[RMDB]
RNA sequence: GGGAACGACUCGAGUAGAGUCGAAAACGGGCCAUCGCCAGCGAACGAGCCGCAGCCGCCGACUGCGGGUGUGAGUCGGGCAGCAGCCCCUUGGCCAUCGACAUCGGCAGGAAGGGAAUGCCGGUGUGGGUACGCUAAAAUUCGUUUUAGCGUACCCAAAAGAAACAACAACAACAAC
Reactivity to 2A3 in 0.01 (KOAc 150mM, MgCl2 10mM, bicine 150mM(pH8.5), 24C), signal-to-noise 2, nucleotides 027 to 126: c020g000g000g020c000c000a040u040c020g020c070c000a040g050c010g040a030a010c010g000a040g230c020c010g000c000a000g000c010c100g170c050c050g100a150c060u020g010c000g010g070g020u030g020u030g020a140g030u060c080g020g020g030c010a030g060c020a020g000c000c000c040c000u040u070g030g010c020c000a080u160c060g030a020c000a010u030c000g000g010c010a000g040g030a040a140g080g020g040a040a070u010g010c000c000g010g000u000g000u000
Reactivity to DMS in 0.01 (KOAc 150mM, MgCl2 10mM, bicine 150mM(pH8.5), 24C), signal-to-noise 2, nucleotides 027 to 126: c200g010g000g000c010c000a110u000c090g000c030c030a140g000c030g000a130a080c030g010a090g030c000c000g020c030a020g000c050c050g020c120c090g010a100c060u000g010c010g000g050g020u000g030u010g010a160g020u000c060g030g000g020c030a160g030c210a200g000c010c000c010c050u000u000g000g030c030c020a080u000c080g020a090c040a030u000c010g000g030c020a040g010g010a140a100g020g010g010a230a180u010g000c000c010g010g000u000g040u020
Chemical mapping of a 177-nucleotide RNA with 2A3 and DMS. 2A3 adducts were read by reverse transcription with SuperScript II with manganese. For 2A3, 2,576 sequencing reads were counted. Reactivities are given for positions 27 through 126. The RNA was probed in 150 mM KOAc, 10 mM MgCl2 and 150 mM bicine (pH 8.5) at 24 C. DMS adducts were read by reverse transcription with MarathonRT.